[RMDB]
RNA sequence: GGGAACGACUCGAGUAGAGUCGAAAAUCCUCCUCCCAUCAAUCACAAAUGUCCUUAAUGGCAUUUAAGGAUUGCUAUUAAGGACAUUUGUGAUUCACGGGAGGAGGUCAAUCAGCGUUCGCGCUGACUAAGCAUUAGGUUUCGACCUAAUGCUUAGAAAAGAAACAACAACAACAAC
Reactivity to DMS in 0.01 (KOAc 150mM, MgCl2 10mM, bicine 150mM(pH8.5), 24C), signal-to-noise 7, nucleotides 027 to 126: u010c000c000u000c000c010u000c000c000c000a090u000c260a020a010u000c000a000c000a000a000a010u000g000u000c000c000u000u000a000a010u000g000g010c000a020u000u000u010a150a170g030g010a060u000u000g010c000u000a010u000u000a000a000g010g000a010c000a000u000u000u000g010u000g010a000u000u000c160a060c150g000g000g000a020g010g010a000g010g010u000c130a040a120u000c000a010g010c000g010u000u010c280g020c020g020c000u000g000a040